[RMDB]
RNA sequence: GGGAACGACUCGAGUAGAGUCGAAAAGGUGGUUAUGCUUCUGCUCCUGUUUAUUCGCAAGCUCACAGCAUGAGAUUGCCUAUUGUUAUUCAUGAGCAGAAUGCUCGUGCUGGAAUGGCAAAUAAACAUACCGCGUAUGAUUCGUCAUACGCGGUAUAAAAGAAACAACAACAACAAC
Reactivity to 2A3 in 0.01 (KOAc 150mM, MgCl2 10mM, bicine 150mM(pH8.5), 24C), signal-to-noise 3, nucleotides 027 to 126: g080g030u070g030g050u140u090a100u190g040c010u010u010c000u040g010c010u000c000c020u010g020u030u020u000a010u010u120c010g010c030a070a020g020c000u020c010a050c030a070g170c070a120u060g020a010g000a030u000u040g000c000c000u120a140u150u220g100u120u050a100u110u070c030a030u020g020a000g000c000a010g040a020a010u070g010c000u000c040g030u030g000c000u030g010g120a170a130u130g010g020c030a020a040a110u080a010a060a020c030
Reactivity to DMS in 0.01 (KOAc 150mM, MgCl2 10mM, bicine 150mM(pH8.5), 24C), signal-to-noise 3, nucleotides 027 to 126: g010g020u000g010g010u010u010a040u000g000c030u000u000c040u000g010c040u000c000c040u010g030u000u010u000a030u000u000c150g000c020a040a050g010c060u000c030a080c060a160g000c050a300u000g000a020g000a030u000u010g010c000c060u000a060u000u010g010u000u010a080u000u000c010a020u000g000a030g000c020a040g010a030a030u010g020c000u000c080g040u000g020c030u000g010g000a100a080u010g000g000c040a040a050a030u000a060a060a100c100